Background: Chemical mapping of a 177-nucleotide RNA with 2A3 and DMS. The 2A3 profile rests on 6,675 reads. Conditions: 150 mM KOAc, 10 mM MgCl2 and 150 mM bicine (pH 8.5), 24 C. For DMS, 3,763 sequencing reads were counted. 2A3 adducts were read by reverse transcription with SuperScript II with manganese.
RNA sequence: GGGAACGACUCGAGUAGAGUCGAAAAGCUCUGAGAUACAGAUCGAACAACAAAGAGAGAUCGAAAAUCUUAGGGGAGAGAACGAAUCUGUCGUCUUCUCUAGGACAUUGUCGAUCAGAUGUCCAAAGACCUUUCAUUGGUUCGCCAAUGAAGGGUCAAAAGAAACAACAACAACAAC
Reactivity to 2A3 in 0.01 (KOAc 150mM, MgCl2 10mM, bicine 150mM(pH8.5), 24C), signal-to-noise 4, nucleotides 027 to 126: g020c000u000c000u000g020a030g000a010u000a020c030a020g010a030u020c010g010a030a020c020a040a020c010a020a290a000g080a020g010a010g000a010u000c000g010a000a040a010a040u000c000u000u010a010g020g000g030g000a010g010a000g020a050a030c030g010a050a100u120c090u160g070u040c030g080u010c010u010u000c000u000c000u010a020g010g010a010c040a130u030u090g080u060c030g020a030u030c020a010g030a070u050g040u000c010c000a100a000a070
Reactivity to DMS in 0.01 (KOAc 150mM, MgCl2 10mM, bicine 150mM(pH8.5), 24C), signal-to-noise 3, nucleotides 027 to 126: g000c010u010c010u000g000a000g000a140u010a060c070a120g000a000u000c000g010a300a130c030a020a070c300a100a080a110g000a050g000a190g000a000u000c000g000a180a060a050a110u000c000u000u010a010g010g020g020g000a010g000a060g000a080a030c000g010a060a100u030c260u030g000u020c040g010u000c050u000u000c000u000c010u020a040g000g000a000c100a110u030u010g020u000c080g000a110u010c050a060g010a040u000g000u010c030c050a180a260a300